Description: The data come from the RNA Mapping Database (RMDB), library OK3TST. The record gives the reactivity of an RNA of 207 nucleotides to DMS and 2A3. The DMS profile rests on 8,648 reads. 2A3 adducts were read by reverse transcription with SuperScript II with manganese.
RNA sequence: GGGAACGACUCGAGUAGAGUCGAAAAUAUGCCAACUUCACAGCUGUUGACCAUCAAUCCAACCUUUAUUUGAUUAAGCUCAGUAUAUAGUACAUCACUGGAAACCAGUCAUUUAGUUAAUUGGCCAUAUAAACGAACAGUUUUGCCAUUCAUUGUAAUAUAAUUAGGUGUUCGCACCUAAUUAUAUAAAAGAAACAACAACAACAAC
Reactivity to DMS in 0.01 (KOAc 150mM, MgCl2 10mM, bicine 150mM(pH8.5), 24C), signal-to-noise 4, nucleotides 027 to 156: u010a070u000g010c030c020a050a090c040u000u010c050a090c070a100g010c040u000g000u010u000g000a080c040c030a100u000c050a110a110u000c060c020a070a070c040c040u000u010u000a060u020u010u010g010a070u000u000a050a080g010c050u010c010a070g020u000a070u000a070u010a150g040u000a180c060a070u010c080a070c030u000g000g000a090a070a060c010c010a050g020u000c020a040u000u010u010a070g010u010u010a050a080u010u000g000g010c050c040a080u010a120u010a040a060a080c040g030a060a070c050a070g020u010u010u000u000g000c030c060a130u000u000c050a110u000u010g000u000a110
Reactivity to 2A3 in 0.01 (KOAc 150mM, MgCl2 10mM, bicine 150mM(pH8.5), 24C), signal-to-noise 5, nucleotides 027 to 156: u180a020u030g040c000c000a030a000c050u100u090c050a000c020a080g030c010u030g010u100u030g070a090c020c010a030u070c020a030a060u030c040c030a040a100c050c010u150u190u160a150u100u120u120g050a030u070u080a060a040g030c020u010c040a000g050u020a050u020a030u050a170g080u050a040c020a090u060c030a020c030u010g030g050a070a100a060c050c010a000g040u030c030a060u080u110u120a040g020u030u060a080a020u090u020g010g000c010c010a010u080a000u040a130a090a010c060g040a030a020c040a070g000u020u020u040u070g000c020c000a010u040u070c020a030u080u160g110u180a100